[RMDB]
RNA sequence: GGGAACGACUCGAGUAGAGUCGAAAAUCCUAAGUCGACGGAUGCAUCGAGGCAGUGCAAGCCAAUCGGAAACGAUUGGUGAUGACCACUGCUACCCACCGAUGCAAUCGUCGAUAUGGAAAAGGGUUCCUCAGUUCUUCGGAACUGAGGAACCCAAACAUGUACCUCUCUUCGGAGAGGUACAUGUAAAAGAAACAACAACAACAAC
Reactivity to 2A3 in 0.01 (KOAc 150mM, MgCl2 10mM, bicine 150mM(pH8.5), 24C), signal-to-noise 1, nucleotides 027 to 156: u010c000c000u020a080a070g030u020c000g000a020c000g000g000a010u010g000c000a000u010c020g000a030g000g040c000a000g000u020g000c040a060a130g000c020c000a010a010u000c000g020g050a070a030a120c000g000a000u010u000g000g000u020g000a050u140g000a010c080c000a000c000u010g000c010u020a030c040c070c010a080c000c030g020a000u000g000c000a000a040u010c010g020u000c000g000a000u010a050u090g040g040a050a070a050a100g000g000g000u000u000c000c010u020c000a010g000u000u000c000u040u100c250g080g000a000a000c000u000g010a000g000g000a010a000c000c000c000a000a000
Reactivity to DMS in 0.01 (KOAc 150mM, MgCl2 10mM, bicine 150mM(pH8.5), 24C), signal-to-noise 1, nucleotides 027 to 156: u000c020c000u020a060a210g010u000c030g000a080c030g060g000a140u000g050c020a030u000c010g010a130g050g000c010a030g050u000g000c040a030a300g060c000c000a000a000u010c010g020g040a170a090a200c010g070a020u000u020g000g020u010g030a000u000g000a160c300c000a020c030u000g030c050u000a010c000c000c030a300c100c000g000a020u010g000c000a000a010u000c000g000u010c030g000a010u000a090u010g000g000a120a080a160a090g000g030g060u000u000c010c000u000c000a020g090u000u000c010u000u000c300g050g050a000a000c000u010g020a030g000g000a010a000c010c000c030a000a000